[RMDB]
RNA sequence: GGGAACGACUCGAGUAGAGUCGAAAAUGAAAUAGCGUGUGCAAGACGCUGAUCUUGCCUUGAUCUGGAACUUUAGUGCUGAGGUCCGAGUUCCAGGGUAUCAUGUCGGACCUUAGCACUAAUUAAACGUAUCUAAAGCGUUCGCGCUUUAGAUACGAAAAGAAACAACAACAACAAC
Reactivity to 2A3 in 0.01 (KOAc 150mM, MgCl2 10mM, bicine 150mM(pH8.5), 24C), signal-to-noise 4, nucleotides 027 to 126: u170g020a020a010a050u200a030g040c030g010u080g040u100g040c030a010a030g070a010c030g050c300u060g030a240u000c010u010u010g010c020c010u040u150g060a130u080c040u060g040g040a020a070c000u040u010u030a010g000u020g020c000u000g010a000g000g000u000c000c010g020a030g030u100u070c040c030a020g010g020g020u150a070u280c090a060u190g070u060c000g030g000a010c000c000u000u000a000g000c000a000c000u010a000a000u010u040a050a070a000
Reactivity to DMS in 0.01 (KOAc 150mM, MgCl2 10mM, bicine 150mM(pH8.5), 24C), signal-to-noise 3, nucleotides 027 to 126: u010g010a060a080a110u000a050g010c060g030u010g000u020g000c110a060a060g000a010c030g010c150u020g010a100u010c010u000u010g000c000c050u000u010g020a080u010c070u010g000g010a070a150c120u010u000u000a020g000u000g010c010u000g010a010g000g000u000c010c000g000a040g000u000u010c130c090a050g000g000g000u010a070u010c080a090u010g000u000c000g000g000a020c010c000u000u000a000g010c000a010c000u000a000a010u000u010a050a100a200